[RMDB]
RNA sequence: GGGAACGACUCGAGUAGAGUCGAAAACCUACCCAAGGUGAAAGCACCUUCUCUCGCAAUGUGUAACUCAUGAUUCUCAUGACCCCUGGUUGGAGAGAUCCGGACUAGGAGCCAGGGGGCCUCUGAUAAAGCCAGACGCACUUCGGUGCGUCUGGAACCUAUUCCUUUAGUUCGCUAAAGGAAUAGGAAAAGAAACAACAACAACAAC
Reactivity to 2A3 in 0.01 (KOAc 150mM, MgCl2 10mM, bicine 150mM(pH8.5), 24C), signal-to-noise 2, nucleotides 027 to 156: c000c000u030a080c030c020c030a000a020g000g010u030g080a180a110a040g140c020a010c000c000u090u010c060u010c020u040c040g070c150a110a150u070g010u040g030u210a090a070c010u040c070a030u060g050a110u210u030c060u030c070a050u090g050a070c000c000c000c000u000g020g040u050u100g080g020a060g000a010g020a050u020c010c010g000g060a040c080u080a080g060g020a010g020c000c000a000g000g000g010g000g000c010c010u120c050u060g050a120u110a220a090a020g040c000c000a000g000a000c010g060c020a000c010u020u040c250g100g000u000g000c010g000u030c000u000g000g000a000a000